RNA sequence: GGGAACGACUCGAGUAGAGUCGAAAAGCUUGAGCGUUUUCGAACGCUCAAGCCUAACAACCUUUGUGUGACAACAUCGAUCUUAACGGUCCCAUUGGGACCUUAAGGGAGUUGAGCACUCUGGUGAUCUAGUAACAUUUGUUCGCAAAUGUUACAAUCCAUAGUCUUCUUUCGAGAAGACUAUGGAAAAAGAAACAACAACAACAAC
Reactivity to 2A3 in 0.01 (KOAc 150mM, MgCl2 10mM, bicine 150mM(pH8.5), 24C), signal-to-noise 4, nucleotides 027 to 156: g010c010u000u000g000a000g010c030g090u030u030u120u160c290g150a010a000c000g020c000u010c000a000a000g000c000c000u020a020a010c030a010a030c000c000u010u020u030g050u020g040u120g200a180c010a030a020c030a210u300c040g080a050u050c020u020u010a050a040c180g010g000u000c000c000c060a300u300u300g000g010g000a000c060c000u000u000a000a000g010g000g000a020g000u000u010g000a010g000c000a000c000u000c010u020g000g030u020g030a050u020c100u190a060g000u000a000a000c000a000u000u000u000g060u030u050c170g000c210a000a010a000u000g010u020u000a000c000a010a040
Reactivity to DMS in 0.01 (KOAc 150mM, MgCl2 10mM, bicine 150mM(pH8.5), 24C), signal-to-noise 2, nucleotides 027 to 156: g000c030u010u000g010a030g010c010g020u000u000u000u000c220g010a040a030c010g010c010u000c000a000a010g020c000c000u000a080a110c040a120a090c010c000u010u010u000g030u000g020u000g020a210c000a020a050c000a240u000c130g000a090u000c000u000u000a000a040c120g030g000u000c000c000c000a300u000u010g030g010g010a000c000c000u000u000a010a000g040g000g030a080g030u000u000g000a300g010c010a010c010u020c030u000g060g010u000g000a150u000c030u000a180g020u010a000a000c000a030u010u000u000g030u000u010c300g010c000a020a010a030u000g010u000u000a000c000a140a140